[RMDB]
Conditions: 150 mM KOAc, 10 mM MgCl2 and 150 mM bicine (pH 8.5), 24 C. An RNA of 177 nucleotides, treated with DMS and 2A3 and read out base by base. Source: RMDB library OK1LIB, as collected in RNAgym. Reactivities are given for positions 27 through 126.

RNA sequence: GGGAACGACUCGAGUAGAGUCGAAAACGGCGGUGCGUGGACGGACAGCCCCAAGGGCGGCGAGUAGUUUUCUUGGCUGUUUGGCUGGAAACAUGGGGGCGUCGGUUAGCUGGGAGGUCCGGAACGGCGAUAAAUAAAGUUUCGACUUUAUUUAUCGAAAAGAAACAACAACAACAAC
Reactivity to DMS in 0.01 (KOAc 150mM, MgCl2 10mM, bicine 150mM(pH8.5), 24C), signal-to-noise 8, nucleotides 027 to 126: c090g000g020c050g000g020u010g000c040g020u010g010g010a120c050g000g010a070c070a130g010c020c010c030c070a130a110g000g000g010c030g000g000c040g000a080g010u020a100g000u010u010u010u010c020u020u030g020g000c000u000g010u020u040u040g000g010c010u000g000g000a060a040a050c070a080u030g010g000g000g010g000c030g010u010c030g000g000u000u010a060g020c060u010g010g000g000a080g000g000u000c030c020g000g000a090a060c080g010g000
Reactivity to 2A3 in 0.01 (KOAc 150mM, MgCl2 10mM, bicine 150mM(pH8.5), 24C), signal-to-noise 7, nucleotides 027 to 126: c010g020g000c020g010g010u030g000c020g020u040g030g060a020c000g010g000a020c010a020g050c000c000c010c020a060a070g040g020g020c000g000g000c030g010a020g040u140a010g000u020u030u030u030c020u050u120g050g000c010u010g080u180u120u280g050g000c000u000g010g000a000a010a010c020a060u080g010g000g000g000g020c000g000u010c000g000g070u000u030a010g000c000u020g000g000g010a010g000g010u000c000c000g000g010a030a010c010g020g000